Background
The data come from the RNA Mapping Database (RMDB), library VIROID. An RNA of 177 nucleotides, treated with 2A3 and read out base by base. The 2A3 profile rests on 740 reads. Reactivities are given for positions 27 through 126.
[RMDB]
RNA sequence: GGGAACGACUCGAGUAGAGUCGAAAAGACUGUCCCUCUCGAGAAUCGGCAAAUGGGGCCCCUCGCUCGUAUCUCCGAGAGGAGACGAGAAGGAGGUGGAUCUCCCUUUGCCAUCCGAGGGGAUUGCGAUUAUUGGUCACUUCGGUGACCAAUAAUCAAAAGAAACAACAACAACAAC
Reactivity to 2A3 in 0.01 (KOAc 150mM, MgCl2 10mM, bicine 150mM(pH8.5), 24C), signal-to-noise 1, nucleotides 027 to 126: g000a020c040u070g050u010c030c100c000u090c000u000c010g300a300g110a240a150u230c300g010g000c020a000a000a050u220g020g010g020g050c000c000c000c000u010c000g050c010u000c000g080u040a160u020c010u000c010c000g040a040g020a050g050g000a010g000a000c000g010a000g000a030a040g180g010a010g000g000u300g080g000a080u070c110u100c010c000c000u000u000u000g000c000c000a000u000c000c000g000a020g020g000g000g000a020u030u120g100c060
The RNA was probed in 150 mM KOAc, 10 mM MgCl2 and 150 mM bicine (pH 8.5) at 24 C.